This 207-nucleotide RNA was probed chemically with 2A3. For 2A3 the reverse transcriptase was SuperScript II with manganese.

RNA sequence: GGGAACGACUCGAGUAGAGUCGAAAAUCCUAAGUCGGAUGACAUGACGUUUGAGCACUUGGACCCGUAUCGGAAACGAUACGGCUAGUGCAAGAUGAGACGUCAACAGCAUCCGAUAUGGAAAACGUCCGUGCGAGGUUCGCCUCGCACGGACGAAGUACAUAGCCUACUUCGGUAGGCUAUGUACAAAAGAAACAACAACAACAAC
Reactivity to 2A3 in 0.01 (KOAc 150mM, MgCl2 10mM, bicine 150mM(pH8.5), 24C), signal-to-noise 1, nucleotides 027 to 156: u040c010c000u050a080a010g040u000c000g000g010a020u000g020a150c070a100u060g000a000c010g000u010u030u040g130a070g000c010a030c060u120u160g060g140a210c020c000c020g000u000a000u000c000g020g080a100a100a030c000g000a000u000a000c000g030g000c030u010a010g000u000g000c020a010a000g170a070u290g080a000g000a050c000g000u020c010a040a040c100a050g040c000a000u000c010c000g000a000u010a070u080g020g000a000a090a090a110c000g000u000c000c000g010u030g000c010g000a000g000g020u060u130c190g170c040c010u000c000g000c000a000c010g000g010a000c000g000a010a000
Annotation
Source: RMDB library RNAMAK, as collected in RNAgym. The 2A3 profile rests on 1,345 reads.